Chemical mapping of a 177-nucleotide RNA with 2A3. The data come from the RNA Mapping Database (RMDB), library OK1LIB. Conditions: 150 mM KOAc, 10 mM MgCl2 and 150 mM bicine (pH 8.5), 24 C.
[RMDB]
RNA sequence: GGGAACGACUCGAGUAGAGUCGAAAAGAACAUUGGUACACUCUUAGGACAAAUAUAAAAGUGGGGAAGAAUUGCGAACCCAUAAAUGUUAAAAAUCUGGGUAUAAUCGAUAAUUGUCCUUGCAUUAGCGCCUGAUAGUAUUCGUACUAUCAGGCGCAAAAGAAACAACAACAACAAC
Reactivity to 2A3 in 0.01 (KOAc 150mM, MgCl2 10mM, bicine 150mM(pH8.5), 24C), signal-to-noise 1, nucleotides 027 to 126: g160a000a080c090a140u100u100g060g000u060a130c040a000c030u090c090u040u000a000g010g070a100c040a000a300a040u140a050u110a160a040a090a000g000u040g000g010g010g000a200a000g020a220a260u040u250g000c000g040a000a000c000c000c070a020u050a000a200a030u110g000u010u300a000a200a000a000a000u040c040u000g000g000g060u030a040u090a020a090u220c000g170a220u010a000a120u060u160g060u010c000c000u000u070g160c000a070u080u080a020
Annotation
2A3 adducts were read by reverse transcription with SuperScript II with manganese. The 2A3 profile rests on 323 reads.